[RMDB]
RNA sequence: GGGAACGACUCGAGUAGAGUCGAAAAGAUAUGGAGUGAUCUCCCUGGUCGACGAGGAUCUACGUAACAUCUAGCUCGGAAACGAGCUAGUGGUAGGGAGUCGCUACAGGGAGAUCACUCCUAAGUCGAUUUAAGAUGCGUUCGCGCAUCUUAAAUCAAAAGAAACAACAACAACAAC
Reactivity to DMS in 0.01 (KOAc 150mM, MgCl2 10mM, bicine 150mM(pH8.5), 24C), signal-to-noise 2, nucleotides 027 to 126: g000a010u020a300u020g010g000a030g020u010g000a010u000c000u000c000c000c000u000g000g010u000c020g020a040c020g000a060g030g010a250u010c010u000a000c010g010u010a050a070c200a020u020c000u000a010g010c010u000c000g030g010a100a120a210c000g000a010g030c000u000a010g000u010g020g010u000a010g000g000g000a300g020u000c010g000c160u000a150c020a010g000g040g010a000g000a000u000c000a000c000u000c000c000u000a010a070g000u010c050
The data come from the RNA Mapping Database (RMDB), library TTRINS. The record gives the reactivity of an RNA of 177 nucleotides to DMS. Values are in units of 0.01, from 0 to 300, in steps of 10. Values cover nucleotides 27 to 126. For DMS, 1,772 sequencing reads were counted. In probing experiments dimethyl sulfate is read out at A N1 and C N3, which are open when not base-paired.